[RMDB]
RNA sequence: GGGAACGACUCGAGUAGAGUCGAAAAGAUAUGGAUUGCGACGAUCAUGUCUUCGAAGAACUUCAAGCUAAGCCUCGGAAACGAGGCUUAGCUUGAAGGGAGAAGGUCAUGGGAGCAAUCCUAAGUCGAGAUAUAAAUAGUUCGCUAUUUAUAUCUCAAAAGAAACAACAACAACAAC
Reactivity to DMS in 0.01 (KOAc 150mM, MgCl2 10mM, bicine 150mM(pH8.5), 24C), signal-to-noise 3, nucleotides 027 to 126: g010a120u000a300u010g000g000a010u000u000g010c000g020a160c240g010a060u000c010a000u000g010u000c000u000u000c020g000a130a170g000a170a240c000u000u000c000a020a010g010c000u000a000a020g000c010c020u000c000g000g010a150a080a200c010g030a020g000g000c000u000u000a000g000c000u000u010g010a000a000g000g000g010a110g010a010a000g000g000u020c000a000u000g000g000g000a090g020c010a010a010u000c000c000u000a020a080g010u000c150
The data come from the RNA Mapping Database (RMDB), library TTRINS. The record gives the reactivity of an RNA of 177 nucleotides to DMS. Values are in units of 0.01, from 0 to 300, in steps of 10.